[RMDB]
RNA sequence: GGGAACGACUCGAGUAGAGUCGAAAAUCCACCAGGUGAACAGUUUAAGCACCUCGUGCCUCUUAUGCAUAAGGGGGCUGCGUGGCCUAUUGUUAGACGACGUAUAGUGCAAAUGUUGUCAGACACUACUAUCGAAUAAGUUCGCUUAUUCGAUAGUAAAAGAAACAACAACAACAAC
Reactivity to 2A3 in 0.01 (KOAc 150mM, MgCl2 10mM, bicine 150mM(pH8.5), 24C), signal-to-noise 5, nucleotides 027 to 126: u000c000c000a010c000c030a020g020g030u020g030a070a040c040a080g020u070u110u220a090a000g040c010a000c010c000u020c040g040u030g020c010c000u030c010u050u100a070u230g100c040a090u070a160a060g020g020g000g010g000c040u050g010c010g000u010g080g000c000c010u080a100u100u160g130u070u060a050g000a030c060g020a000c010g040u040a060u070a140g100u120g040c030a040a070a070u090g000u020u000g030u030c020a020g030a050c020a010c070u020
Reactivity to DMS in 0.01 (KOAc 150mM, MgCl2 10mM, bicine 150mM(pH8.5), 24C), signal-to-noise 5, nucleotides 027 to 126: u000c010c010a130c120c080a040g000g010u000g010a090a070c100a130g010u000u010u000a130a110g010c040a040c010c030u000c160g020u000g000c010c010u000c030u010u010a080u010g010c160a130u010a070a080g010g010g000g010g010c020u000g000c030g020u000g000g030c040c000u000a070u000u010g010u010u010a050g010a030c030g010a030c020g020u000a050u000a100g000u000g010c060a070a080a120u010g020u000u000g010u000c030a200g000a160c170a070c130u000

Description:
Structure probing data (2A3 and DMS) for a 177-nucleotide construct. The reactions ran in a buffer of 150 mM KOAc, 10 mM MgCl2 and 150 mM bicine (pH 8.5), at 24 C. For 2A3, 4,700 sequencing reads were counted.